[RMDB]
RNA sequence: GGGAACGACUCGAGUAGAGUCGAAAAGAUAUGGAAGACCCAUUCGAGGUAGGCCUCUUCGGAAACGAAUGCCUACUACCCACCGAAUGGUCUUCCUAAGUCAAACAGCCUGGUUCGCCAGGCUGAACUAUGCGCUAGACUUCGGUCUAGCGCAUAGAAAAGAAACAACAACAACAAC
Reactivity to DMS in 0.01 (KOAc 150mM, MgCl2 10mM, bicine 150mM(pH8.5), 24C), signal-to-noise 1, nucleotides 027 to 126: g000a060u000a300u000g010g000a000a000g000a010c120c030c080a050u010u010c020g010a080g030g000u000a000g000g010c010c000u000c000u020u010c000g010g000a140a070a170c010g000a050a000u000g000c000c030u000a000c000u000a000c050c030c110a300c080c000g000a030a030u000g000g010u000c010u000u000c000c000u000a000a040g000u010c000a140a100a210c010a010g030c000c000u000g000g010u000u030c130g030c000c000a010g020g000c000u000g010a060a040

The record gives the reactivity of an RNA of 177 nucleotides to DMS. Conditions: 150 mM KOAc, 10 mM MgCl2 and 150 mM bicine (pH 8.5), 24 C.